[RMDB]
RNA sequence: GGGAACGACUCGAGUAGAGUCGAAAAGAACCCUCGAUCCUUUAUUGGGGGGUACACUCGAGGAGUGGAAGGCGGGGAGGAGGGGGCUGAGGGCUAACCUACGGAAAUUCCUGAGCUCCCCUGACGUACUCAUGUAAUAGUUCGCUAUUACAUGAGUAAAAGAAACAACAACAACAAC
Reactivity to DMS in 0.01 (KOAc 150mM, MgCl2 10mM, bicine 150mM(pH8.5), 24C), signal-to-noise 1, nucleotides 027 to 126: g000a120a150c000c010c000u000c040g010a110u000c090c080u000u020u010a140u040u020g010g020g000g000g010g010u010a060c100a040c040u000c000g010a060g000g010a120g020u000g020g020a050a060g020g010c140g010g000g000g000a120g000g000a170g010g000g000g000g040c030u030g020a060g000g030g020c070u000a050a060c080c050u020a090c090g000g010a040a050a200u000u000c000c020u000g000a070g010c030u000c000c000c010c030u010g010a110c140g000u000
Reactivity to 2A3 in 0.01 (KOAc 150mM, MgCl2 10mM, bicine 150mM(pH8.5), 24C), signal-to-noise 2, nucleotides 027 to 126: g000a010a020c000c010c000u000c010g070a130u110c000c090u130u220u300a150u250u140g010g010g000g000g000g010u050a050c080a030c050u060c020g160a060g070g020a040g030u130g030g030a090a020g070g020c060g050g010g010g020a120g020g030a080g050g030g010g000g000c030u050g010a040g000g000g020c010u020a040a090c010c010u010a030c020g050g030a030a090a050u050u030c000c000u020g000a010g000c010u040c040c010c010c000u010g020a010c020g020u000
Structure probing data (DMS and 2A3) for a 177-nucleotide construct. For DMS the reverse transcriptase was MarathonRT. For 2A3, 1,489 sequencing reads were counted. High DMS reactivity at an A or C suggests that its Watson-Crick edge is free. For 2A3 the reverse transcriptase was SuperScript II with manganese. The RNA was probed in 150 mM KOAc, 10 mM MgCl2 and 150 mM bicine (pH 8.5) at 24 C.